Overview: This 177-nucleotide RNA was probed chemically with DMS and 2A3. The RNA was probed in 150 mM KOAc, 10 mM MgCl2 and 150 mM bicine (pH 8.5) at 24 C. 2A3 adducts were read by reverse transcription with SuperScript II with manganese. The 2A3 profile rests on 2,276 reads.

[RMDB]
RNA sequence: GGGAACGACUCGAGUAGAGUCGAAAAACAGGGCUCUGACCUAUGAAUUGACAGCCAGUGCUCUCGUCUCCCCUCUGGCUGCCAAUUCCAUAGGUCACAGGUAUGUAUACCUAACGUUCGCGUUAGGCCACUAUGGUAUCUUCGGAUACCAUAGUGGAAAAGAAACAACAACAACAAC
Reactivity to DMS in 0.01 (KOAc 150mM, MgCl2 10mM, bicine 150mM(pH8.5), 24C), signal-to-noise 2, nucleotides 027 to 126: a060c020a070g000g030g020c040u000c190u000g000a020c000c010u000a010u000g000a030a010u000u000g000a020c010a040g000c000c000a000g000u000g000c180u010c160u010c030g000u000c140u000c000c010c000c010u010c000u000g000g010c010u000g000c000c000a020a010u000u000c120c070a000u000a020g000g020u010c000a020c080a010g010g010u010a080u000g010u000a110u010a280c000c000u000a000a010c000g000u000u010c210g010c020g010u000u000a010g000g000
Reactivity to 2A3 in 0.01 (KOAc 150mM, MgCl2 10mM, bicine 150mM(pH8.5), 24C), signal-to-noise 1, nucleotides 027 to 126: a000c020a000g090g070g000c000u000c020u060g000a010c000c000u010a000u010g020a010a020u020u000g000a000c000a000g000c010c010a010g020u050g080c090u090c090u130c250g110u020c090u040c090c000c020c000u000c000u010g010g000c000u010g020c000c000a000a000u000u030c060c000a020u000a010g000g030u000c000a000c000a010g000g020u090a050u120g030u020a110u070a130c000c000u010a010a000c000g020u040u080c260g000c000g110u000u020a000g000g000